An RNA of 177 nucleotides, treated with 2A3 and DMS and read out base by base. Values are in units of 0.01, from 0 to 300, in steps of 10. Conditions: 150 mM KOAc, 10 mM MgCl2 and 150 mM bicine (pH 8.5), 24 C.
[RMDB]
RNA sequence: GGGAACGACUCGAGUAGAGUCGAAAAGUCAGCCCGUCUGUCACUGGCAAAAAUGACCCGGGGAUUGGGGGACGGUCGCAGUGUGAAGCAGGCGGACGGCAGGGUGAAGCUGAAACUGUCACCGUCCCAGUGUUACAGAGUUCGCUCUGUAACACUGAAAAGAAACAACAACAACAAC
Reactivity to 2A3 in 0.01 (KOAc 150mM, MgCl2 10mM, bicine 150mM(pH8.5), 24C), signal-to-noise 4, nucleotides 027 to 126: g030u030c020a020g020c000c010c020g040u020c020u030g080u060c020a030c090u040g050g000c000a030a050a040a070a130u150g070a110c000c020c010g010g000g010g040a090u160u280g210g010g010g000g000a000c020g000g000u050c030g000c020a010g010u040g090u030g170a030a000g010c020a030g010g080c010g000g020a040c020g030g000c050a090g040g030g060u110g080a080a010g000c050u030g010a050a040a010c010u020g030u070c020a000c010c000g000u000c000c010
Reactivity to DMS in 0.01 (KOAc 150mM, MgCl2 10mM, bicine 150mM(pH8.5), 24C), signal-to-noise 6, nucleotides 027 to 126: g010u010c030a090g000c060c020c020g020u010c010u010g030u000c040a300c060u000g010g020c060a030a060a040a100a140u010g010a100c020c020c010g020g000g000g000a260u020u010g020g010g010g000g000a030c040g010g010u000c160g000c030a020g010u000g000u000g010a180a090g000c020a130g000g020c020g010g000a020c050g000g030c080a080g010g010g010u000g010a070a090g000c000u000g010a150a150a040c030u000g010u000c230a040c010c000g000u000c000c010
Record summary: The 2A3 profile rests on 7,076 reads. The data come from the RNA Mapping Database (RMDB), library OK2TRN. DMS adducts were read by reverse transcription with MarathonRT. As a SHAPE reagent, 2A3 marks flexible, mostly unpaired nucleotides at the ribose 2'-OH.